[RMDB]
Source information: The record gives the reactivity of an RNA of 207 nucleotides to 2A3 and DMS. DMS adducts were read by reverse transcription with MarathonRT. Values cover nucleotides 27 to 156.
RNA sequence: GGGAACGACUCGAGUAGAGUCGAAAACGGUCACGAUUCGUCGUGACCGAAAAAGAUAUGGAUCGUACCAGGGAGCUGGCACCUCGGAAACGAGGUGGUCCAGCUUUGAUCUGGUUACGAUCCUAAGUCAAAAAACAUGUAGCUUCGGCUACAUGAAACACAUAUGUUAGUUCGCUAACAUAUGUGUAAAAGAAACAACAACAACAAC
Reactivity to 2A3 in 0.01 (KOAc 150mM, MgCl2 10mM, bicine 150mM(pH8.5), 24C), signal-to-noise 4, nucleotides 027 to 156: c010g010g010u000c000a000c000g020a020u060u090c260g050u010c000g000u140g010a000c000c000g000a010a000a000a000a000g040a010u070a020u080g000g000a000u010c010g000u000a010c000c000a000g000g010g000a020g000c000u000g010g000c010a000c000c000u000c000g030g020a040a040a060c010g000a000g000g000u000g000g010u020c000c000a000g000c020u010u030u010g010a010u000c000u000g000g000u050u040a010c000g000a000u010c000c000u010a010a010g000u000c020a030a010a030a020a070a080c010a000u000g000u000a000g010c000u050u040c300g110g000c000u000a000c000a000u000g000a020a050
Reactivity to DMS in 0.01 (KOAc 150mM, MgCl2 10mM, bicine 150mM(pH8.5), 24C), signal-to-noise 4, nucleotides 027 to 156: c030g020g000u000c000a010c000g010a070u000u010c300g020u000c010g040u010g020a010c010c000g010a000a010a040a080a100g010a120u000a270u000g010g000a030u010c020g050u000a050c000c000a020g010g020g010a030g030c000u000g000g000c010a030c000c000u000c000g020g000a160a110a260c020g000a020g020g020u000g000g020u000c000c000a020g020c000u000u000u000g010a050u010c000u000g000g010u000u010a010c010g020a010u000c010c000u010a010a070g000u000c020a000a080a070a130a110a140c010a010u000g000u000a020g000c000u000u010c300g060g000c000u000a000c000a000u000g010a060a090